[RMDB]
RNA sequence: GGGAACGACUCGAGUAGAGUCGAAAAGAUGGAGACUUCGGUCUCCAUCAAAACAGGACGUGGAGCCGGCUUCGCGGCGCACGACGAUGACGCCGGGGCCGGAAAUCCUUAGGUUCGCCUAAGGAAACACAUACUUAUUGUUCGCAAUAAGUAUGUGAAAAGAAACAACAACAACAAC
Reactivity to DMS in 0.01 (KOAc 150mM, MgCl2 10mM, bicine 150mM(pH8.5), 24C), signal-to-noise 8, nucleotides 027 to 126: g010a010u000g000g000a010g010a020c000u000u010c190g030g010u000c000u000c000c000a000u000c000a020a040a100a120c120a090g000g010a080c120g010u010g010g010a130g010c010c000g000g000c010u000u010c040g010c020g020g010c010g010c010a040c050g010a100c230g000a120u000g000a120c010g020c010c000g000g000g000g020c010c000g000g000a010a040a070u000c000c000u000u000a010g000g010u000u010c220g010c000c000u010a010a020g000g000a020a100a190
Reactivity to 2A3 in 0.01 (KOAc 150mM, MgCl2 10mM, bicine 150mM(pH8.5), 24C), signal-to-noise 6, nucleotides 027 to 126: g010a000u000g000g000a020g010a010c010u040u070c260g040g010u000c000u000c000c000a010u000c000a000a000a000a000c030a020g080g090a030c070g120u160g050g080a040g100c000c000g040g010c030u270u250c120g140c020g150g000c000g000c010a010c030g290a040c110g300a300u040g100a100c010g010c000c010g010g010g010g000c000c000g000g000a000a000a000u010c000c000u010u000a020g030g020u030u030c180g030c040c010u010a010a000g020g000a010a070a000